[RMDB]
RNA sequence: GGGAACGACUCGAGUAGAGUCGAAAAGUAUAGCGAAGUUAGAGGCGACGAGCUAUACGAUGAAUCAGCCUCAAUUGAUAUCGGUAUACAGAUCGGCGGCGAUCAGAUACCGUAAUUAGUAGCCGCAAUCCGGAGUGGAGACGCACGACGGUCGUCAGAGCUAUUAAUCAUUCGUGAUUAAUAGCUCAAAAGAAACAACAACAACAAC
Reactivity to 2A3 in 0.01 (KOAc 150mM, MgCl2 10mM, bicine 150mM(pH8.5), 24C), signal-to-noise 4, nucleotides 027 to 156: g000u000a000u000a010g000c000g060a170a010g000u030u050a060g020a010g000g010c010g000a000c010g020a020g030c000u000a000u000a000c030g010a040u080g100a030a130u150c070a020g010c010c020u050c040a080a130u130u140g150a060u080a070u220c010g000g000u010a000u020a110c100a060g010a010u020c040g100g000c000g010g000c000g020a000u000c020a020g020a040u000a010c000c000g040u020a000a020u070u090a020g140u020a020g000c010c000g020c010a000a050u040c000c000g030g000a050g020u020g000g080a150g040a090c020g040c100a000c010g060a010c020g020g010u050c020g030u040c130a020
Reactivity to DMS in 0.01 (KOAc 150mM, MgCl2 10mM, bicine 150mM(pH8.5), 24C), signal-to-noise 2, nucleotides 027 to 156: g030u000a030u000a010g010c020g020a110a180g020u010u000a110g010a190g040g040c000g000a080c090g000a300g020c000u000a010u000a010c000g000a090u000g020a080a130u000c060a150g020c010c010u000c020a110a200u000u000g030a130u000a030u000c010g030g010u000a070u000a070c080a240g000a070u000c030g020g080c150g040g060c030g000a100u000c030a210g010a110u000a040c010c010g000u000a060a040u000u010a080g020u000a070g000c010c030g020c050a140a190u010c060c010g040g000a230g010u020g000g030a240g000a100c090g030c080a090c030g010a130c070g020g020u020c060g000u000c070a080